This 177-nucleotide RNA was probed chemically with 2A3 and DMS.
Values cover nucleotides 27 to 126.
For 2A3 the reverse transcriptase was SuperScript II with manganese.
Conditions: 150 mM KOAc, 10 mM MgCl2 and 150 mM bicine (pH 8.5), 24 C.
DMS adducts were read by reverse transcription with MarathonRT.
The 2A3 profile rests on 1,918 reads.
RNA sequence: GGGAACGACUCGAGUAGAGUCGAAAAGAUAUGGAUCCUGUAGACAGCUUGGAUUUAUCGGAAACGAUUGUCAGCUGUUACUGGGAUCCUAAGUCAAAAGCCAAUGUCGCUUCGGCGACAUUGGCAAGUAAGUCAGAAGGUUCGCCUUCUGACUUACAAAAGAAACAACAACAACAAC
Reactivity to 2A3 in 0.01 (KOAc 150mM, MgCl2 10mM, bicine 150mM(pH8.5), 24C), signal-to-noise 2, nucleotides 027 to 126: g030a030u090a050u120g010g010a000u000c000c000u030g120u200a110g120a240c020a000g040c060u210u300g170g010a080u300u290u270a050u100c000g030g010a050a040a050c010g030a010u000u020g010u060c030a000g000c000u000g000u020u030a020c040u050g000g000g000a000u000c000c000u010a070a030g050u000c020a100a020a040a020g000c030c000a000a000u000g000u000c000g060c110u080u130c300g180g040c020g020a010c000a000u000u000g020g000c020a000a000
Reactivity to DMS in 0.01 (KOAc 150mM, MgCl2 10mM, bicine 150mM(pH8.5), 24C), signal-to-noise 2, nucleotides 027 to 126: g000a040u010a300u010g000g000a010u000c000c000u000g010u000a090g010a090c000a000g040c010u000u000g040g010a030u030u000u000a030u000c020g000g010a080a060a220c000g000a030u000u010g020u000c010a100g020c000u000g000u000u010a010c050u020g030g000g010a000u010c000c000u000a000a020g020u000c020a140a090a100a120g010c000c000a000a000u010g000u000c010g040c000u010u020c250g020g030c030g000a020c000a000u000u010g000g000c010a000a010